[RMDB]
RNA sequence: GGGAACGACUCGAGUAGAGUCGAAAACGCAAAGCUGCCGCGCGGCGCUCUGGAGGCCUUGCCCCGCGCACUGCUCUUUACAUGGCCCGACGUGAGGGCACUUCGCGGGCAGUGCUGCGGCCUCGUGAAACUGCCCCUAAGUUCGCUUAGGGGCAAACUAUUUAAGUGUAUUCGUACACUUAAAUAGAAAAGAAACAACAACAACAAC
Reactivity to DMS in 0.01 (KOAc 150mM, MgCl2 10mM, bicine 150mM(pH8.5), 24C), signal-to-noise 2, nucleotides 027 to 156: c030g040c030a050a070a130g030c020u000g040c020c010g020c090g040c080g050g050c060g000c030u030c050u000g010g010a100g030g010c010c040u010u010g020c030c050c010c010g010c100g000c020a050c040u010g000c000u000c030u000u000u000a120c090a100u010g010g010c000c010c000g010a270c130g010u000g020a210g020g000g010c000a020c010u000u000c040g020c300g020g000g010c000a050g000u010g010c030u000g030c010g010g030c020c020u000c040g000u010g010a090a080a080c100u000g010c000c010c000c000u010a020a030g000u010u000c280g010c010u000u000a020g000g010g030g060c010a000a010a030
Reactivity to 2A3 in 0.01 (KOAc 150mM, MgCl2 10mM, bicine 150mM(pH8.5), 24C), signal-to-noise 5, nucleotides 027 to 156: c050g030c030a070a070a030g020c060u130g030c060c030g130c050g040c130g060g020c010g010c010u020c060u090g100g000a020g000g000c010c020u050u140g020c030c000c010c010g020c010g000c000a020c010u010g000c000u020c010u070u190u130a090c060a120u120g040g000c000c000c000g100a150c120g110u160g120a170g000g000g030c040a100c030u070u100c060g020c040g030g010g000c010a000g000u010g000c030u050g010c010g010g000c000c000u010c010g000u020g020a120a050a010c050u050g000c000c010c000c000u010a010a000g010u020u100c170g060c120u000u000a000g000g020g010g000c000a000a000a000